[RMDB]
RNA sequence: GGGAACGACUCGAGUAGAGUCGAAAAAGUAGGUGACUAUGUCAUUAUUAGUGAAAAAUUGUUUGUGCGUAGUAAGGAAGAAGACGGAUUUGCCUUCUACCCUGCUUGCACUAAUGGUCAUGCUGUAGCAUCGUGACAACUUCGGUUGUCACGAUGCAAAAGAAACAACAACAACAAC
Reactivity to 2A3 in 0.01 (KOAc 150mM, MgCl2 10mM, bicine 150mM(pH8.5), 24C), signal-to-noise 1, nucleotides 027 to 126: a010g090u070a020g050g040u010g050a030c060u030a100u170g050u080c030a000u010u180a070u060u100a040g250u130g060a080a040a040a050a110u100u140g050u010u010u090g010u000g000c010g030u010a000g010u020a030a030g010g020a000a000g030a000a000g000a040c090g090g040a250u010u160u260g030c000c060u010u000c000u000a010c000c000c000u010g010c000u000u010g000c010a010c010u000a010a010u010g000g000u040c010a010u130g030c020u030g010u030a010